Description: Structure probing data (2A3 and DMS) for a 177-nucleotide construct. 2A3 adducts were read by reverse transcription with SuperScript II with manganese. The DMS profile rests on 2,613 reads. The 2A3 profile rests on 2,508 reads. For DMS the reverse transcriptase was MarathonRT.
RNA sequence: GGGAACGACUCGAGUAGAGUCGAAAAGAUCACCUGUUCGCAGGUGAUCAAUCUCCCACUUGAACGAAGUCUCACAGCCUCGUUGCCCACGAGGCACGGGCGUAUUGAUCCGCUUCGGCGGAUCAAAUUCGAGAAAGGGAUUCGUCCCUUUCUCGAAAAAAGAAACAACAACAACAAC
Reactivity to 2A3 in 0.01 (KOAc 150mM, MgCl2 10mM, bicine 150mM(pH8.5), 24C), signal-to-noise 2, nucleotides 027 to 126: g000a000u000c000a000c000c000u000g010u040u050c250g010c100a010g000g000u000g030a010u010c000a010a000u000c000u010c000c010c000a030c080u100u160g100a070a030c070g030a130a020g100u000c020u030c060a080c110a070g020c010c010u080c040g070u130u070g030c020c030c000a090c060g000a130g000g000c000a000c000g000g020g000c010g000u030a060u070u030g010a010u000c000c010g010c020u010u060c210g080g000c000g000g020a000u010c000a010a000a010
Reactivity to DMS in 0.01 (KOAc 150mM, MgCl2 10mM, bicine 150mM(pH8.5), 24C), signal-to-noise 3, nucleotides 027 to 126: g010a000u000c000a000c000c000u010g020u000u010c200g020c010a000g000g000u000g010a000u010c000a010a110u010c200u000c000c000c010a160c170u000u000g010a050a040c120g000a130a090g000u020c040u000c090a150c240a140g010c010c000u010c020g000u000u000g010c030c030c070a160c200g000a090g000g000c000a010c130g000g000g000c050g000u000a060u020u000g000a010u000c000c000g020c010u000u020c190g030g020c000g000g010a010u000c010a000a010a120